An RNA of 207 nucleotides, treated with DMS and 2A3 and read out base by base.

RNA sequence: GGGAACGACUCGAGUAGAGUCGAAAAUCCACUAUGAAUCUAGUCACUAAAUAAACACAAUUUGCUACUGUGUGUAAUAGUGAGUGUUGAUAACACAAAAUAAUAGUAUAGUUUUGGAAGAUUAUACGCGCCCUUGCUCCGUUCGCGGAGCAAGGAAGUAUUGGAAGAACUUCGGUUCUUCCAAUACAAAAGAAACAACAACAACAAC
Reactivity to DMS in 0.01 (KOAc 150mM, MgCl2 10mM, bicine 150mM(pH8.5), 24C), signal-to-noise 2, nucleotides 027 to 156: u010c010c010a240c110u000a080u030g040a190a110u000c070u010a150g000u010c020a010c010u010a010a020a080u000a130a160a010c020a010c010a020a070u000u010u000g020c220u010a080c050u010g030u010g010u000g010u020a100a300u000a010g010u020g020a070g010u010g010u020u000g010a100u010a120a160c040a100c030a050a040a040a150u010a080a300u030a060g010u000a060u000a000g010u000u000u010u010g010g000a190a160g010a050u000u010a040u000a020c030g000c140g060c080c000c000u000u020g000c000u010c000c000g000u000u010c300g020c030g030g000a000g010c000a000a000g000g000a020a030
Reactivity to 2A3 in 0.01 (KOAc 150mM, MgCl2 10mM, bicine 150mM(pH8.5), 24C), signal-to-noise 5, nucleotides 027 to 156: u020c030c000a050c080u180a180u260g120a100a050u040c090u100a070g110u030c010a000c010u020a030a000a040u030a010a030a000c000a000c020a050a090u100u120u260g090c040u110a100c060u020g000u010g000u000g000u020a010a030u000a020g000u000g010a040g000u040g020u030u060g070a120u220a270a010c030a010c020a030a150a040a030u240a060a120u090a130g010u010a020u010a050g030u010u030u100u170g100g030a080a040g000a080u040u020a030u030a020c020g040c000g050c060c000c000u000u000g000c000u000c000c000g020u050u050c190g020c000g090g010a000g000c000a000a000g000g000a000a000

Record summary:
Conditions: 150 mM KOAc, 10 mM MgCl2 and 150 mM bicine (pH 8.5), 24 C. DMS adducts were read by reverse transcription with MarathonRT. As a SHAPE reagent, 2A3 marks flexible, mostly unpaired nucleotides at the ribose 2'-OH. For 2A3 the reverse transcriptase was SuperScript II with manganese. High DMS reactivity at an A or C suggests that its Watson-Crick edge is free. For DMS, 3,066 sequencing reads were counted.